This 170-nucleotide RNA was probed chemically with DMS and 2A3.
[RMDB]
RNA sequence: GGGAACGACUCGAGUAGAGUCGAAAAUUUGGAGCGCGGGGGGGACCGUCGGGUCCGUGGGAUGCCCUUCCCGAUUCCGUCCAUCCCCACCCCCGGGUGUCCCCCCAGGAAUGGCGGGACCCCACUCGAAGUACACCGUUCGCGGUGUACAAAAGAAACAACAACAACAAC
Reactivity to DMS in 0.01 (KOAc 150mM, MgCl2 10mM, bicine 150mM(pH8.5), 24C), signal-to-noise 5, nucleotides 027 to 129: u050u030u040g050g000a060g000c220g060c000g000g010g000g020g010g000g030a030c060c060g050u030c030g000g000g000u000c100c130g060u040g000g010g020a020u080g020c110c000c030u000u020c060c010c080g030a180u000u000c080c050g020u040c050c020a110u050c020c000c010c030a230c020c070c020c020c040g000g000g000u060g010u020c010c030c020c110c020c010a080g010g000a070a040u040g030g060c280g030g030g040a020c000c010c000c000a060c060u050c050g000a100a110
Reactivity to 2A3 in 0.01 (KOAc 150mM, MgCl2 10mM, bicine 150mM(pH8.5), 24C), signal-to-noise 6, nucleotides 027 to 129: u100u100u130g050g020a050g040c100g000c060g030g000g000g000g000g010g000a000c000c020g110u080c030g040g000g050u030c060c080g020u120g010g030g000a050u080g020c000c010c000u050u030c010c000c000g010a030u170u030c040c010g030u000c010c010a090u060c020c010c000c010a050c000c010c000c010c020g000g010g010u160g010u000c030c000c000c000c000c010a000g030g110a130a060u080g000g000c040g000g000g040a010c020c000c000c000a050c020u090c060g020a110a020

Reactivities are given for positions 27 through 129.